[RMDB]
RNA sequence: GGGAACGACUCGAGUAGAGUCGAAAAUGCAAAUUCGGAGGUCAGGGAUUCUACUGAUUUAACUAAAUUUCAUCCGGCAAAGUGAAAAACUUGUACGUCGGAUGUUUUUAGUGGGAAAUCAGUCGGAGCAUCAUUAGUAAUUCGUUACUAAUGAUGCAAAAGAAACAACAACAACAAC
Reactivity to 2A3 in 0.01 (KOAc 150mM, MgCl2 10mM, bicine 150mM(pH8.5), 24C), signal-to-noise 9, nucleotides 027 to 126: u120g010c020a020a020a110u120u070c040g070g020a030g010g030u050c040a020g040g010g040a040u040u010c000u020a000c000u000g000a000u010u000u030a020a010c000u000a000a000a030u050u070u060c000a000u000c000c000g000g000c020a040a000a000g000u030g090a170a070a050a060a060c010u030u030g060u110a050c080g000u000c000g000g000a000u000g000u000u000u000u000u000a010g000u030g020g090g070a010a010a000u000c000a000g020u010c030g030g020a020
Reactivity to DMS in 0.01 (KOAc 150mM, MgCl2 10mM, bicine 150mM(pH8.5), 24C), signal-to-noise 8, nucleotides 027 to 126: u020g000c100a060a070a120u010u010c060g020g010a080g010g010u000c040a040g000g010g010a140u010u010c020u000a040c000u000g000a010u000u000u010a170a020c000u000a000a010a020u020u000u000c000a010u000c000c000g020g000c000a110a010a010g010u000g000a090a060a100a130a020c000u000u000g010u010a060c250g010u000c000g000g000a000u000g000u000u000u000u000u000a000g010u000g010g020g010a030a010a000u000c000a010g000u000c100g010g000a140